[RMDB]
RNA sequence: GGGAACGACUCGAGUAGAGUCGAAAAGUUGGGACUCUAACCUCAGAUGACUUAUUAAUCUUAGCCGCUGAUCUAGAGAAGUUAAAGUCAAAGGUGAUCAGAACAGAAAGGCCAUUAAGUGCAGGUGCUGUAAGAUGUGGUUCGCCACAUCUUACAGAAAAGAAACAACAACAACAAC
Reactivity to DMS in 0.01 (KOAc 150mM, MgCl2 10mM, bicine 150mM(pH8.5), 24C), signal-to-noise 2, nucleotides 027 to 126: g020u010u000g020g000g010a120c010u020c020u000a120a090c070c020u010c060a090g020a110u000g020a080c040u000u000a090u010u010a110a120u010c060u000u000a090g000c070c030g000c080u000g010a030u000c030u000a130g000a180g030a110a070g010u000u000a070a090a130g000u000c030a030a060a130g010g000u000g020a080u000c080a020g010a090a080c100a120g000a030a040a100g030g000c030c000a060u000u000a050a080g010u000g020c040a030g000g010u010g000
Reactivity to 2A3 in 0.01 (KOAc 150mM, MgCl2 10mM, bicine 150mM(pH8.5), 24C), signal-to-noise 1, nucleotides 027 to 126: g110u080u040g020g000g040a000c020u000c040u070a020a020c040c000u070c020a070g030a210u030g010a020c000u150u100a010u150u190a250a110u000c000u040u150a040g020c000c010g080c150u030g010a090u080c000u110a050g020a050g070a130a040g040u160u160a160a120a070g010u020c000a190a070a000g210g050u030g070a030u110c040a010g090a080a020c040a040g210a140a050a000g060g010c000c020a020u170u110a070a000g000u000g020c000a000g050g080u120g070
This 177-nucleotide RNA was probed chemically with DMS and 2A3. Conditions: 150 mM KOAc, 10 mM MgCl2 and 150 mM bicine (pH 8.5), 24 C. 2A3 is a SHAPE reagent: it acylates the 2'-hydroxyl of flexible nucleotides of all four kinds.